The record gives the reactivity of an RNA of 177 nucleotides to 2A3.
For 2A3, 1,158 sequencing reads were counted.
High 2A3 reactivity points to a flexible backbone, as in loops and unpaired stretches.
The RNA was probed in 150 mM KOAc, 10 mM MgCl2 and 150 mM bicine (pH 8.5) at 24 C.
Source: RMDB library OK1LIB, as collected in RNAgym.

[RMDB]
RNA sequence: GGGAACGACUCGAGUAGAGUCGAAAACACCACGGUUACGACCGUGGUGAAGCAGCAAUGGCCUUAAAGCUGCAAACACGGAAAAACCGUGAAAGGCCAAAAACUGGCGGUAUACGUACCGCCAGAAUCACUAGGCGUCGUUCGCGACGCCUAGUGAAAAAGAAACAACAACAACAAC
Reactivity to 2A3 in 0.01 (KOAc 150mM, MgCl2 10mM, bicine 150mM(pH8.5), 24C), signal-to-noise 2, nucleotides 027 to 126: c010a000c000c000a000c000g000g000u120u080a070c240g020a020c170c010g000u000g000g030u000g000a000a000g000c000a000g040c050a110a300u150g000g000c000c000u070u160a120a120a000g000c000u000g000c010a000a010a000c010a000c000g060g000a220a170a000a000a000c000c000g000u010g000a080a000a000g010g010c010c000a090a090a000a000a000c000u000g000g000c000g000g000u010a010u010a000c210g090u050a010c000c000g000c020c000a000g010a000a050